[RMDB]
RNA sequence: GGGAACGACUCGAGUAGAGUCGAAAAGUUAGGUGAGGCUCCUAUGCAAACACAGGCCACUGCCCAAAAAUGUCCAAAGAUGCCAAUGGGUAGAACAGGGAUUGUCGGAUUAAGGCUUUCCAUAAUGAAAACAAAGUAUGCUUCGGCAUACUUUGAACUAUCUUCGAUACUUCGGUAUCGAAGAUAGAAAAGAAACAACAACAACAAC
Reactivity to DMS in 0.01 (KOAc 150mM, MgCl2 10mM, bicine 150mM(pH8.5), 24C), signal-to-noise 2, nucleotides 027 to 156: g010u010u020a040g000g020u010g010a100g020g050c040u010c030c020u000a140u000g030c030a100a090a150c060a070c010a100g000g030c030c020a100c040u000g010c030c000c000a010a060a070a090a080u010g000u000c010c040a070a080a140g020a100u000g010c040c020a060a190u000g030g000g030u000a030g020a130a140c090a060g040g020g000a060u010u000g010u010c040g020g030a130u000u010a070a100g020g000c040u000u010u000c010c030a120u030a060a060u010g010a110a090a100a140c000a010a020a040g000u000a010u000g010c010u010u010c280g050g010c010a000u000a000c000u000u000u000g010a030a150
Reactivity to 2A3 in 0.01 (KOAc 150mM, MgCl2 10mM, bicine 150mM(pH8.5), 24C), signal-to-noise 3, nucleotides 027 to 156: g070u070u090a020g000g040u040g050a070g030g020c010u040c040c010u070a050u130g060c050a090a100a040c030a020c020a050g060g010c000c020a030c030u040g010c000c000c000a080a060a030a000a010u090g020u030c030c030a110a080a080g080a060u080g040c010c010a050a080u030g030g010g010u030a030g030a090a040c100a090g060g000g040a030u020u040g030u030c030g000g030a040u100u190a090a030g000g030c010u010u010u020c020c010a030u090a170a110u170g090a070a060a000a030c000a010a000a000g000u000a000u000g000c000u020u050c150g060g000c000a000u000a000c020u000u000u000g000a000a000